Structure probing data (DMS and 2A3) for a 177-nucleotide construct. The reactions ran in a buffer of 150 mM KOAc, 10 mM MgCl2 and 150 mM bicine (pH 8.5), at 24 C. Source: RMDB library OK1LIB, as collected in RNAgym. For 2A3 the reverse transcriptase was SuperScript II with manganese. High DMS reactivity at an A or C suggests that its Watson-Crick edge is free. For 2A3, 2,812 sequencing reads were counted.
RNA sequence: GGGAACGACUCGAGUAGAGUCGAAAAGUCCUAGCGAAAAGCUAGGACAAGUGCAUCGCUAGACAUAUCGUCGAAAAGACGAUCGAAAGAUGCACAUGUCUAGCAAGUCGAGGAGAACUCGACAAAAAGUAGCUAUCCUGUUCGCAGGAUAGCUACUAAAAGAAACAACAACAACAAC
Reactivity to DMS in 0.01 (KOAc 150mM, MgCl2 10mM, bicine 150mM(pH8.5), 24C), signal-to-noise 2, nucleotides 027 to 126: g000u000c030c000u000a010g000c080g000a080a040a100a110g020c000u000a000g000g000a000c000a020a040g010u010g030c040a080u000c140g010c170u000a070g000a060c070a130u040a010u000c000g020u030c000g000a100a010a100a160g000a010c070g000a000u000c060g020a200a100a080g020a100u000g000c010a030c030a010u000g000u010c000u010a080g020c010a200a150g000u000c000g000a020g010g000a080g020a150a170c000u000c010g010a000c000a000a070a010a060
Reactivity to 2A3 in 0.01 (KOAc 150mM, MgCl2 10mM, bicine 150mM(pH8.5), 24C), signal-to-noise 3, nucleotides 027 to 126: g000u020c000c000u020a020g030c000g080a180a120a050a040g000c000u000a000g030g000a010c000a000a010g000u000g060c050a080u130c160g000c000u060a030g000a040c010a070u180a000u030c000g000u000c010g050a060a170a020a020g000a010c000g000a010u030c050g070a120a030a030g120a030u130g000c010a010c000a030u030g000u000c020u000a010g010c030a120a040g000u000c000g000a000g020g030a110g020a140a150c010u000c000g000a000c000a000a020a000a000